[RMDB]
RNA sequence: GGGAACGACUCGAGUAGAGUCGAAAAUAUCAAGCUGAUCCGUUCUACCUGUCCAUUUAGGAUCAGCGAGGGACAGGAUGACCUCUCCGAGAGGAGUAAAAUGGUCUGUGCGACGACGUAUGACCGGACCGCUUAGUCGUCGCUUCGGUCCGGGAGACACGCAUAGUAGGUUCGCCUACUAUGCGUGAAAAGAAACAACAACAACAAC
Reactivity to 2A3 in 0.01 (KOAc 150mM, MgCl2 10mM, bicine 150mM(pH8.5), 24C), signal-to-noise 2, nucleotides 027 to 156: u200a030u090c040a020a040g000c030u000g010a000u010c010c010g080u160u170c000u120a130c020c030u100g070u100c020c020a100u000u160u180a080g000g010a010u010c010a000g020c010g000a040g000g040g000a030c060a050g090g000a050u050g000a000c000c000u000c000u000c020c050g010a040g000a040g070g000a000g020u110a010a020a040a060u260g000g000u030c010u040g050u130g030c030g010a010c000g000a020c040g170u150a040u130g090a070c000c000g020g000a030c000c000g010c090u040u030a000g020u040c050g060u060c060g010c000u020u060c010g020g000u000c000c010g100g000g000a040g000a000
Reactivity to DMS in 0.01 (KOAc 150mM, MgCl2 10mM, bicine 150mM(pH8.5), 24C), signal-to-noise 1, nucleotides 027 to 156: u000a100u020c040a070a180g030c000u010g000a000u000c010c010g000u000u010c080u010a140c140c030u000g020u010c030c020a250u000u000u010a160g020g010a010u000c000a000g040c060g000a060g010g020g020a080c060a080g010g010a140u010g000a060c040c020u000c000u000c000c030g030a300g000a230g030g000a050g030u000a030a070a030a080u000g050g010u010c000u000g000u000g030c000g000a060c020g030a040c040g020u000a090u030g000a060c040c010g010g010a030c000c020g000c060u000u010a100g000u000c030g010u000c000g000c020u000u020c010g040g010u000c010c020g000g010g030a220g000a210
Source: RMDB library OK3TST, as collected in RNAgym. Chemical mapping of a 207-nucleotide RNA with 2A3 and DMS. 2A3 is a SHAPE reagent: it acylates the 2'-hydroxyl of flexible nucleotides of all four kinds. For DMS, 3,039 sequencing reads were counted. 2A3 adducts were read by reverse transcription with SuperScript II with manganese. The RNA was probed in 150 mM KOAc, 10 mM MgCl2 and 150 mM bicine (pH 8.5) at 24 C. The 2A3 profile rests on 1,089 reads.